The record gives the reactivity of an RNA of 177 nucleotides to 2A3 and DMS. DMS adducts were read by reverse transcription with MarathonRT. Reactivities are given for positions 27 through 126.
[RMDB]
RNA sequence: GGGAACGACUCGAGUAGAGUCGAAAAUAGAUAAUGAUGAAGCAAAAUUAAUCUAAUCCAACACUUGAUCUGAGAGAUACUAUGUGCAUCUCCAAGUGAAGUUACAACUGUUAGCUUCUGAAUCUAAAUUCUUACAUAAUUUCGAUUAUGUAAGAAUAAAAGAAACAACAACAACAAC
Reactivity to 2A3 in 0.01 (KOAc 150mM, MgCl2 10mM, bicine 150mM(pH8.5), 24C), signal-to-noise 5, nucleotides 027 to 126: u080a000g010a010u040a050a090u090g090a010u070g000a030a000g000c040a090a080a110a110u100u080a070a100u060c030u030a030a030u060c000c010a080a040c010a030c030u040u050g020a080u130c130u140g060a030g000a000g020a140u050a110c060u070a120u300g110u100g030c010a010u000c010u000c010c000a020a000g010u010g050a030a010g020u060u090a070c060a180a050c100u120g060u270u060a020g000c000u000u000c010u050g030a040a020u000c010u030a000a110
Reactivity to DMS in 0.01 (KOAc 150mM, MgCl2 10mM, bicine 150mM(pH8.5), 24C), signal-to-noise 9, nucleotides 027 to 126: u010a010g000a020u000a050a080u010g000a110u010g000a020a020g000c020a070a080a140a040u000u000a050a080u010c050u000a030a080u020c040c020a090a200c050a010c020u000u000g010a130u020c190u020g010a160g010a020g010a040u000a020c020u020a110u030g020u020g030c110a030u000c000u000c010c010a030a010g010u000g010a080a080g000u000u000a040c150a080a090c170u000g000u010u000a290g010c000u000u000c000u010g000a060a100u000c010u000a040a120